[RMDB]
RNA sequence: GGGAACGACUCGAGUAGAGUCGAAAAAUGACUGAGUUGCAGAAAUUAAGUGGUUUCCUAAAAGUUACCAGGUUAAGAGAUCUGUUGACUCAAACUUGACUGUAAUUUUCUCCUAGUAUACUUUGAACUAAGAAUCAUGUUUCGACAUGAUUCUUAGAAAAGAAACAACAACAACAAC
Reactivity to 2A3 in 0.01 (KOAc 150mM, MgCl2 10mM, bicine 150mM(pH8.5), 24C), signal-to-noise 3, nucleotides 027 to 126: a010u080g040a040c070u020g000a000g010u000u020g010c000a010g030a070a160a170u040u020a050a010g070u000g050g020u000u000u000c010c000u100a110a120a000a030g010u010u000a010c000c000a020g100g260u040u050a070a010g050a020g000a200u020c020u050g020u140u270g050a010c000u000c020a030a050a040c020u040u110g060a040c050u050g090u130a100a150u020u050u070u060c040u050c020c010u020a060g110u110a150u050a200c030u120u120u160g050a110a050
Reactivity to DMS in 0.01 (KOAc 150mM, MgCl2 10mM, bicine 150mM(pH8.5), 24C), signal-to-noise 4, nucleotides 027 to 126: a050u000g000a140c170u010g020a030g010u000u010g020c040a020g010a060a110a120u010u000a040a060g020u010g020g020u000u000u010c010c010u020a080a090a110a230g000u000u000a010c000c010a030g000g020u000u010a020a060g000a120g010a140u000c010u010g030u000u000g020a010c020u000c070a060a090a130c150u000u000g010a140c130u000g010u020a050a070u010u000u000u000c100u000c010c050u000a070g010u010a060u010a060c070u000u000u000g010a080a170
Chemical mapping of a 177-nucleotide RNA with 2A3 and DMS. The RNA was probed in 150 mM KOAc, 10 mM MgCl2 and 150 mM bicine (pH 8.5) at 24 C. 2A3 adducts were read by reverse transcription with SuperScript II with manganese.